[RMDB]
RNA sequence: GGGAACGACUCGAGUAGAGUCGAAAAGAUAUGGAAUAGGUACAUUGCGAUGAAAUCGGAAACGAUGGAGCAGGUACUAUUCCUAAGUCAAAAGUGAUUACUACAACUUCGGUUGUAGUAAUCACAAUCAGGUGUGUAUGUUCGCAUACACACCUGAAAAAGAAACAACAACAACAAC
Reactivity to DMS in 0.01 (KOAc 150mM, MgCl2 10mM, bicine 150mM(pH8.5), 24C), signal-to-noise 2, nucleotides 027 to 126: g010a020u010a300u010g000g000a030a000u010a050g000g010u000a000c000a050u000u020g010c020g000a130u010g000a060a090a020u000c000g010g000a120a090a090c020g000a020u010g000g010a150g000c020a020g000g000u000a020c000u000a010u000u000c000c000u000a000a080g000u010c020a080a110a110a100g000u000g020a010u000u000a000c000u000a010c000a010a010c010u000u010c170g020g000u000u000g010u010a010g030u010a000a020u000c000a000c000a010a130
Reactivity to 2A3 in 0.01 (KOAc 150mM, MgCl2 10mM, bicine 150mM(pH8.5), 24C), signal-to-noise 2, nucleotides 027 to 126: g020a010u020a050u120g000g020a030a000u050a090g130g050u040a040c060a280u170u100g050c090g300a300u050g050a030a020a000u000c020g000g040a070a060a050c000g000a020u030g000g000a020g000c000a000g020g000u020a000c010u010a000u010u000c000c010u000a080a040g050u020c050a100a000a060a040g010u000g000a010u000u000a020c010u000a000c000a000a020c010u060u110c300g070g020u010u000g010u020a000g000u000a000a000u000c000a010c020a000a000